[RMDB]
An RNA of 177 nucleotides, treated with 2A3 and DMS and read out base by base. Values are in units of 0.01, from 0 to 300, in steps of 10. The DMS profile rests on 1,658 reads. For 2A3 the reverse transcriptase was SuperScript II with manganese. Source: RMDB library RFM100, as collected in RNAgym.
RNA sequence: GGGAACGACUCGAGUAGAGUCGAAAAUGCGUGAUUGCAAGUGAACAGUGCCCCUGUGGAAGAGCUCUAUAGUGUAAAGUGUAAAUAAAAAUAGCUAUUAUUCAAUUAGAUUAGGCUUAAUAGAUGAGAUGGCCGAUUAAUUCGUUAAUCGGCCAUCAAAAGAAACAACAACAACAAC
Reactivity to 2A3 in 0.01 (KOAc 150mM, MgCl2 10mM, bicine 150mM(pH8.5), 24C), signal-to-noise 2, nucleotides 027 to 126: u140g000c060g030u190g050a060u110u060g000c070a090a040g070u050g020a070a140c070a080g050u060g160c000c010c010c000u000g000u030g020g020a030a030g070a000g000c000u110c000u060a080u140a180g190u170g040u020a040a090a020g090u030g120u080a100a220a120u170a010a150a000a020a000u120a000g000c000u000a000u000u000a010u000u210c160a080a280u060u010a100g050a070u080u080a040g020g000c030u000u000a040a040u000a060g180a170u130g000a000
Reactivity to DMS in 0.01 (KOAc 150mM, MgCl2 10mM, bicine 150mM(pH8.5), 24C), signal-to-noise 2, nucleotides 027 to 126: u030g080c050g020u000g010a090u040u070g000c090a110a080g070u050g010a040a050c040a060g040u020g030c000c000c020c020u040g000u000g010g030a030a040g010a140g030c080u020c100u040a090u010a070g060u020g000u050a080a040a040g010u010g010u010a020a070a100u040a010a020a070a040a120u000a120g010c000u000a080u010u000a020u000u000c010a030a060u010u000a110g000a100u000u000a130g020g000c010u000u000a020a010u000a080g020a040u030g010a300